The data come from the RNA Mapping Database (RMDB), libraries RFM100 and RFMREP. The record gives the reactivity of an RNA of 177 nucleotides to 2A3 and DMS.
RNA sequence: GGGAACGACUCGAGUAGAGUCGAAAAAGCAUUGCGAGGGCCGCCGUGUUCAAGCGCGGGGAGUCAAUCGGACACGACCCGAAACCGGAUGAUCUAGACAUGGGCAAGACGAAGCGUGCCGAAAGGCGAGCAUUAAAAUAUUCGUAUUUUAAUGCUCAAAAGAAACAACAACAACAAC
Reactivity to 2A3 in 0.01 (KOAc 150mM, MgCl2 10mM, bicine 150mM(pH8.5), 24C), signal-to-noise 9, nucleotides 027 to 126: a010g070c060a070u090u150g020c030g030a060g010g020g010c010c010g030c010c000g040u040g040u070u160c130a100a040g030c010g000c010g030g000g010g010a040g030u030c030a030a120u070c030g010g010a020c020a010c070g100a080c000c000c030g040a080a030a020c020c010g010g020a040u060g020a030u060c040u080a040g040a100c030a080u090g030g000g010c040a040a020g050a020c010g020a030a020g040c040g040u060g000c010c000g060a060a020a000g060g020c050
Reactivity to DMS in 0.01 (KOAc 150mM, MgCl2 10mM, bicine 150mM(pH8.5), 24C), signal-to-noise 9, nucleotides 027 to 126: a090g000c060a070u010u010g010c040g000a090g000g010g010c040c030g010c020c010g010u000g010u010u020c190a100a130g010c060g010c030g010g000g010g000a120g010u010c050a080a100u000c080g000g000a090c070a090c070g010a120c030c000c020g000a050a090a090c080c020g000g000a060u000g000a060u010c050u010a080g010a080c100a060u010g000g000g010c050a060a070g010a090c060g000a090a080g000c060g020u020g000c000c020g000a040a070a110g000g010c110
About this RNA:
For DMS the reverse transcriptase was MarathonRT.